[RMDB]
RNA sequence: GGGAACGACUCGAGUAGAGUCGAAAAUACGAGGCGGCACUCAAGAAAGUUCGCCCUAUGGAGCGAGCCGUUGGGGGUGCUAUGAGCAAGGUAAACGACGCUCUAAAUGCUGAACAAGGUGGCAUGUCGUUGAGCGCAUUCUCUGGAGGUCGCACAACAACCGCAAUAAAUUCGUUUAUUGCGGUUGAAAAGAAACAACAACAACAAC
Reactivity to DMS in 0.01 (KOAc 150mM, MgCl2 10mM, bicine 150mM(pH8.5), 24C), signal-to-noise 2, nucleotides 027 to 156: u000a040c060g010a170g010g020c060g040g000c010a080c020u010c020a050a130g010a140a130a060g010u000u000c010g030c000c000c000u010a100u000g040g020a040g000c020g010a010g030c020c020g020u000u000g020g000g000g010g040u000g010c040u000a030u000g010a070g020c000a070a130g010g000u000a050a040a120c050g000a120c010g010c020u000c010u000a040a070a050u010g010c020u000g000a070a160c070a090a180g030g020u010g000g000c010a060u000g000u000c100g030u040u000g000a050g020c020g010c040a130u000u000c060u000c040u020g000g010a100g030g030u000c040g000c060a070c020a050a190
Reactivity to 2A3 in 0.01 (KOAc 150mM, MgCl2 10mM, bicine 150mM(pH8.5), 24C), signal-to-noise 3, nucleotides 027 to 156: u180a020c060g020a030g030g040c020g000g010c040a030c100u040c030a020a070g060a080a040a010g050u010u020c000g030c000c000c000u130a190u280g070g000a110g010c010g000a010g000c020c000g050u060u090g000g020g030g010g000u000g020c000u040a120u090g020a030g040c060a080a040g020g010u090a030a060a030c010g100a010c030g010c020u000c000u050a060a080a020u060g000c030u030g080a050a010c070a110a070g100g010u070g030g000c030a020u110g010u060c030g050u000u090g000a010g040c030g000c010a010u120u040c070u020c020u040g040g000a000g030g000u030c030g010c050a030c010a090a010

Annotation: This 207-nucleotide RNA was probed chemically with DMS and 2A3. The 2A3 profile rests on 2,057 reads. 2A3 is a SHAPE reagent: it acylates the 2'-hydroxyl of flexible nucleotides of all four kinds. The reactions ran in a buffer of 150 mM KOAc, 10 mM MgCl2 and 150 mM bicine (pH 8.5), at 24 C.